Structure probing data (2A3) for a 207-nucleotide construct.
It was measured as part of the RMDB library M2RFPK.
2A3 is a SHAPE reagent: it acylates the 2'-hydroxyl of flexible nucleotides of all four kinds.
[RMDB]
RNA sequence: GGGAACGACUCGAGUAGAGUCGAAAAAUCAGCCUUCGUUCUGUAAACGGGGUUGGAUCCGACUCUCAUAGGCUCUCCAACCCAACUCCUACUCAAUACGUCCUCGUCGUACCGAACGGUAACAUGUAAAACGAAGGCUGCUUCGGCAGCCUUCGAACAGUACUCCAUCGUUCGCGAUGGAGUACUGAAAAGAAACAACAACAACAAC
Reactivity to 2A3 in 0.01 (KOAc 150mM, MgCl2 10mM, bicine 150mM(pH8.5), 24C), signal-to-noise 1, nucleotides 027 to 156: a010u060c030a010g070c030c040u170u100c040g110u120u040c040u070g130u170a240a120a060c080g030g000g000g010u000u000g010g000a030u300c000c020g120a110c060u130c000u050c060a090u120a130g000g000c010u000c000u000c010c000a040a010c000c000c020a000a000c000u000c000c010u000a060c000u050c030a070a110u090a080c000g020u020c020c010u020c030g030u020c030g000u050a010c020c010g000a030a040c150g030g050u110a030a010c010a050u150g070u240a070a030a020a120c030g000a000a000g000g010c000u000g000c000u000u010c010g130g000c000a000g020c000c000u010u000c000g000a020a000